Conditions: 150 mM KOAc, 10 mM MgCl2 and 150 mM bicine (pH 8.5), 24 C. The record gives the reactivity of an RNA of 177 nucleotides to 2A3 and DMS. 2A3 adducts were read by reverse transcription with SuperScript II with manganese. The DMS profile rests on 2,431 reads. Reactivities are rounded to 0.1 and cut off at 0 and 3.
RNA sequence: GGGAACGACUCGAGUAGAGUCGAAAAGUUAGAGCAAUAAUUCUAGUAUCCGAAUUAGUCUUAUCCCUUGGCUCGCUCUAACGUUAUUACUCCCUAAUACUCCCUUUAACCGCAUCCCCCUGGUGCGCAACUAUCAUUCCUUCGGGAAUGAUAGUUGAAAAGAAACAACAACAACAAC
Reactivity to 2A3 in 0.01 (KOAc 150mM, MgCl2 10mM, bicine 150mM(pH8.5), 24C), signal-to-noise 1, nucleotides 027 to 126: g010u010u010a000g000a010g000c020a110a130u070a150a060u050u000c010u030a040g100u100a250u180c040c040g030a030a030u030u020a010g010u000c010u060u070a120u100c080c030c080u000u140g050g000c020u040c100g000c000u000c000u020a020a000c000g000u000u040a100u090u080a070c050u030c000c000c070u040a050a090u010a140c040u070c000c000c000u060u140u020a070a010c010c020g010c020a040u050c000c020c030c010c010u000g000g010u010g000c030g000
Reactivity to DMS in 0.01 (KOAc 150mM, MgCl2 10mM, bicine 150mM(pH8.5), 24C), signal-to-noise 3, nucleotides 027 to 126: g000u000u000a010g000a020g020c000a240a190u000a050a010u010u010c020u000a280g000u000a070u010c180c130g000a040a020u000u000a040g010u000c020u010u000a090u000c030c020c040u000u000g000g020c030u000c120g010c010u000c000u000a010a010c020g030u000u010a060u020u000a150c210u000c020c000c000u000a080a090u010a110c110u000c000c030c010u000u010u000a110a110c170c010g000c050a050u000c020c060c050c060c060u010g000g000u000g010c070g000